The data come from the RNA Mapping Database (RMDB), library OK2TRN. The record gives the reactivity of an RNA of 177 nucleotides to 2A3 and DMS. High 2A3 reactivity points to a flexible backbone, as in loops and unpaired stretches. The reactions ran in a buffer of 150 mM KOAc, 10 mM MgCl2 and 150 mM bicine (pH 8.5), at 24 C. For DMS the reverse transcriptase was MarathonRT. The DMS profile rests on 1,187 reads.

RNA sequence: GGGAACGACUCGAGUAGAGUCGAAAAUAGCCGCGCGAUGCCGCGCGAUCGCGAUCGUAAUAUUAUAUAAUGCGCCGUAAUCGGCAUCGUAGCAUGCGCAUAUAUAUAUCGGCGCCGUAUACGGCUAGGUAUCCACUAGGUUCGCCUAGUGGAUACCAAAAGAAACAACAACAACAAC
Reactivity to 2A3 in 0.01 (KOAc 150mM, MgCl2 10mM, bicine 150mM(pH8.5), 24C), signal-to-noise 2, nucleotides 027 to 126: u050a030g050c010c000g010c010g050c000g080a040u030g010c060c010g120c030g050c010g040a030u040c010g020c030g100a070u060c020g000u030a080a080u080a090u300u070a080u040a050u040a240a180u120g090c020g010c030c000g010u040a050a100u080c030g000g000c030a000u030c010g000u000a060g080c040a030u130g000c040g000c090a000u050a010u000a010u040a000u010a020u160c020g050g000c030g000c000c000g030u060a090u000a110c010g000g000c010u010a040
Reactivity to DMS in 0.01 (KOAc 150mM, MgCl2 10mM, bicine 150mM(pH8.5), 24C), signal-to-noise 2, nucleotides 027 to 126: u000a060g020c010c030g010c140g020c020g030a030u000g010c030c060g010c270g010c040g000a010u000c030g030c150g020a070u010c130g000u000a080a130u000a040u000u000a060u000a090u000a100a050u000g010c050g030c060c120g000u000a090a270u010c040g000g000c020a020u000c050g050u000a090g000c150a100u000g000c060g000c000a100u000a050u010a070u000a110u020a110u020c040g000g010c020g000c010c080g000u000a110u010a160c030g000g000c010u000a020